About this RNA: This 177-nucleotide RNA was probed chemically with 2A3 and DMS. For 2A3, 5,034 sequencing reads were counted. It was measured as part of the RMDB library TTRDES.

RNA sequence: GGGAACGACUCGAGUAGAGUCGAAAAAGAUAUGGAUACGUAACAAAGGUCAACAGCAAUAUUGUCAGUAUCGGAAACGAUACUUGGAUUUAUAUUGACAUGACCACAAAUACGUAUCCUAAGUCAACUAACCGAUGUAGUUCGCUACAUCGGUUAGAAAAGAAACAACAACAACAAC
Reactivity to 2A3 in 0.01 (KOAc 150mM, MgCl2 10mM, bicine 150mM(pH8.5), 24C), signal-to-noise 3, nucleotides 027 to 126: a000g040a020u070a030u140g000g000a000u010a000c010g010u010a130a030c040a240a090a060g070g000u020c000a050a050c050a290g020c000a010a020u000a010u000u030g030u020c000a010g020u000a010u010c000g040g000a100a040a000c020g000a010u000a000c000u030u120g110g010a000u020u300u080a030u010a010u020u030g050a090c040a110u090g000a010c000c030a010c050a030a090a000u030a000c000g000u000a000u010c000c000u000a030a000g000u000c010a000a070
Reactivity to DMS in 0.01 (KOAc 150mM, MgCl2 10mM, bicine 150mM(pH8.5), 24C), signal-to-noise 3, nucleotides 027 to 126: a090g000a030u000a300u010g010g010a000u000a000c010g010u040a000a040c200a120a240a120g010g010u010c010a020a150c270a170g030c040a000a010u000a000u000u000g000u000c000a040g000u010a000u000c000g000g000a120a090a190c000g000a010u020a000c000u000u000g040g020a010u010u010u000a000u010a010u000u010g000a020c100a240u010g020a010c000c000a050c210a080a150a100u010a010c000g030u000a020u000c010c010u000a010a110g010u010c030a070a270